[RMDB]
RNA sequence: GGGAACGACUCGAGUAGAGUCGAAAAAAGUGAAGCAGUCUUCUUUUCGUGUUUUCCAUAAUUAGGGCAUUCCAGAAAGAUGAGGAUAUUUGCUGUCUUUAUAUUCAUGACCUACUGGCAUUUGCUGCCUGCAAAUAGGGUUCGCCCUAUUUGCAGGAAAAGAAACAACAACAACAAC
Reactivity to DMS in 0.01 (KOAc 150mM, MgCl2 10mM, bicine 150mM(pH8.5), 24C), signal-to-noise 2, nucleotides 027 to 126: a060a060g010u010g000a050a030g030c070a080g010u000c100u000u000c020u000u000u000u020c080g000u000g000u020u010u000u020c000c010a110u010a070a120u010u000a050g020g000g030c040a030u000u000c060c060a090g010a050a070a110g010a070u000g010a090g000g010a030u000a050u000u010u000g000c110u000g010u000c020u000u010u000a020u000a040u030u000c050a080u030g000a130c040c020u000a110c090u010g000g030c060a100u000u010u000g010c070u010g000
Reactivity to 2A3 in 0.01 (KOAc 150mM, MgCl2 10mM, bicine 150mM(pH8.5), 24C), signal-to-noise 1, nucleotides 027 to 126: a010a000g080u060g000a040a000g010c060a040g040u040c010u080u000c000u070u110u010u030c020g030u000g030u120u040u000u000c000c000a070u040a160a070u220u070a060g010g020g050c010a040u040u070c040c000a020g100a020a050a000g080a050u070g050a020g060g000a020u050a160u160u070u130g000c020u000g000u040c000u000u060u030a120u040a040u110u020c090a080u150g040a030c000c000u010a010c030u040g000g000c060a110u040u010u160g050c030u000g070
An RNA of 177 nucleotides, treated with DMS and 2A3 and read out base by base. The 2A3 profile rests on 765 reads. The DMS profile rests on 1,696 reads. Conditions: 150 mM KOAc, 10 mM MgCl2 and 150 mM bicine (pH 8.5), 24 C.